[RMDB]
RNA sequence: GGGAACGACUCGAGUAGAGUCGAAAAGUGUUUGGUGGCUCACCCACCUCAGAGAAGAAGAGCAAAGUCAUUAUGUAAGUCACUCAGUCUCCUUCAUCCAGGGUUGGGACAGAGUCAGACUGGCUGAAGGCUCUAGUGUUUUCGAACACUAGAGCCUAAAAGAAACAACAACAACAAC
Reactivity to DMS in 0.01 (KOAc 150mM, MgCl2 10mM, bicine 150mM(pH8.5), 24C), signal-to-noise 2, nucleotides 027 to 126: g020u000g020u000u020u010g010g040u030g120g000c030u010c040a140c060c010c000a030c050c010u000c050a110g010a100g000a040a020g000a080a040g000a060g010c050a110a140a040g010u010c100a100u020u030a070u010g020u010a050a060g010u000c130a030c000u010c030a150g000u000c000u000c010c020u010u000c020a120u010c040c120a190g010g000g000u000u020g010g020g030a040c120a060g010a040g000u000c060a060g020a120c040u000g020g000c040u010g020a150
Reactivity to 2A3 in 0.01 (KOAc 150mM, MgCl2 10mM, bicine 150mM(pH8.5), 24C), signal-to-noise 1, nucleotides 027 to 126: g020u030g060u050u100u110g030g030u060g000g060c020u030c060a030c000c030c010a010c000c010u040c000a070g030a000g040a100a000g060a060a010g020a000g030c020a080a000a000g050u080c030a080u040u280a060u180g160u140a030a030g070u080c020a010c040u030c010a000g050u000c040u040c010c040u000u020c020a250u010c050c030a060g180g010g000u060u070g060g000g070a070c010a050g040a000g020u010c020a010g030a080c020u020g000g030c010u010g110a040